[RMDB]
RNA sequence: GGGAACGACUCGAGUAGAGUCGAAAAGAAGACGUGACGAAAAGUCACGAAAAGUACGAAAGUACAAAGGAGCAAAAGCAUCGGCUCCUAAAAACGAUGCAAACUUGAUCGAGAGAUCAAGAAAAGACAUCAUCGACUCAUUCGUGAGUCGAUGAUGAAAAGAAACAACAACAACAAC
Reactivity to 2A3 in 0.01 (KOAc 150mM, MgCl2 10mM, bicine 150mM(pH8.5), 24C), signal-to-noise 3, nucleotides 027 to 126: g180a060a020g120a030c040g000u000g010a000c000g080a140a170a080a020g010u010c010a010c000g000a010a000a000a010g010u010a000c000g070a110a060a030g000u000a010c040a020a100a090g000g000a010g000c010a040a120a160a030g000c000a020u020c000g040g000c000u010c000c000u030a030a070a000a000a000c030g000a000u000g010c000a040a000a060c000u000u000g000a000u000c000g010a000g010a000g000a150u000c010a000a000g040a020a080a000a000g090a000
Reactivity to DMS in 0.01 (KOAc 150mM, MgCl2 10mM, bicine 150mM(pH8.5), 24C), signal-to-noise 1, nucleotides 027 to 126: g050a100a140g030a280c080g110u000g000a080c000g000a050a040a010a050g010u000c000a060c000g020a080a000a230a240g000u000a020c050g020a240a050a020g000u000a000c000a060a020a110g000g000a000g050c050a170a040a080a120g020c000a040u000c000g000g030c000u050c000c000u000a070a010a070a000a010c050g020a000u010g000c000a020a070a300c000u030u000g000a000u000c000g000a150g000a080g000a020u000c000a000a000g000a120a110a080a040g000a230